[RMDB]
This 177-nucleotide RNA was probed chemically with 2A3 and DMS. The RNA was probed in 150 mM KOAc, 10 mM MgCl2 and 150 mM bicine (pH 8.5) at 24 C. For 2A3 the reverse transcriptase was SuperScript II with manganese.
RNA sequence: GGGAACGACUCGAGUAGAGUCGAAAAAUAAACAGCUUACAGAAAGUCAUGCAAAAGCAGCCAGUAGAAUAGAAGGUAAUCAGCUGUUGGGACCAUUGGUCCUGUUUCUUACUACUAGUUCUUCAGGCUGAUAUUGGCAUUUCGAUGCCAAUAUCAGAAAAGAAACAACAACAACAAC
Reactivity to 2A3 in 0.01 (KOAc 150mM, MgCl2 10mM, bicine 150mM(pH8.5), 24C), signal-to-noise 2, nucleotides 027 to 126: a000u130a010a060a020c020a060g010c010u180u180a020c050a060g140a070a110a010g070u050c030a030u110g030c060a160a070a020a160g000c010a020g030c070c030a000g020u080a030g060a230a030u030a050g090a090a040g030g000u050a040a060u110c090a020g000c020u080g010u070u130g000g000g020a010c020c010a200u030u230g050g000u000c060c030u010g000u000u040u000c020u040u080a040c010u000a010c010u030a030g070u050u050c000u070u050c030a030g100g000
Reactivity to DMS in 0.01 (KOAc 150mM, MgCl2 10mM, bicine 150mM(pH8.5), 24C), signal-to-noise 3, nucleotides 027 to 126: a100u020a070a050a040c030a040g000c020u000u000a150c170a130g000a090a060a080g000u000c070a070u000g000c080a040a050a110a090g000c060a020g000c060c020a060g020u010a030g010a070a030u000a020g000a120a040g010g010u000a020a050u010c190a060g020c040u010g000u000u010g030g000g020a020c010c030a180u010u000g020g000u000c000c010u010g000u000u000u010c030u000u000a100c050u000a070c040u020a050g010u010u000c020u000u000c070a090g020g000